The data come from the RNA Mapping Database (RMDB), libraries RFM100 and RFMREP. Chemical mapping of a 177-nucleotide RNA with DMS and 2A3. 2A3 adducts were read by reverse transcription with SuperScript II with manganese. The RNA was probed in 150 mM KOAc, 10 mM MgCl2 and 150 mM bicine (pH 8.5) at 24 C. For DMS the reverse transcriptase was MarathonRT.
RNA sequence: GGGAACGACUCGAGUAGAGUCGAAAAAGAGCCUCAGAGGAAGCGCGGGCUAAGUUCGUGCCAGCAGCCGCGGUAAUACGAACUGCGCGAACGUUAUUCGGAUUCACUGGGCUUAAAGGGUGCGUAGAUCUUUGCGUAAGUUCGCUUACGCAAAGAUAAAAGAAACAACAACAACAAC
Reactivity to DMS in 0.01 (KOAc 150mM, MgCl2 10mM, bicine 150mM(pH8.5), 24C), signal-to-noise 6, nucleotides 027 to 126: a100g010a060g020c020c010u020c060a060g010a120g020g000a040a060g010c050g010c070g000g020g020c100u020a060a050g010u010u000c000g030u000g000c040c060a130g020c060a100g010c080c110g030c040g020g010u010a100a070u030a130c030g000a050a060c030u000g000c030g000c020g000a030a080c040g010u000u010a120u020u000c010g000g010a110u010u000c060a080c030u000g010g000g000c010u010u010a040a080a090g010g010g020u020g010c050g000u010a120g000
Reactivity to 2A3 in 0.01 (KOAc 150mM, MgCl2 10mM, bicine 150mM(pH8.5), 24C), signal-to-noise 5, nucleotides 027 to 126: a000g050a000g030c020c020u140c060a020g030a050g110g020a040a030g040c060g010c030g070g040g030c050u040a080a010g010u030u020c020g000u030g060c060c020a020g020c030a040g030c040c110g050c010g010g050u090a070a020u110a090c030g030a020a010c020u030g000c050g000c030g040a050a010c040g020u060u070a060u110u100c040g040g030a040u070u000c010a010c030u030g010g010g010c000u040u030a070a020a000g050g000g010u030g020c020g020u050a010g000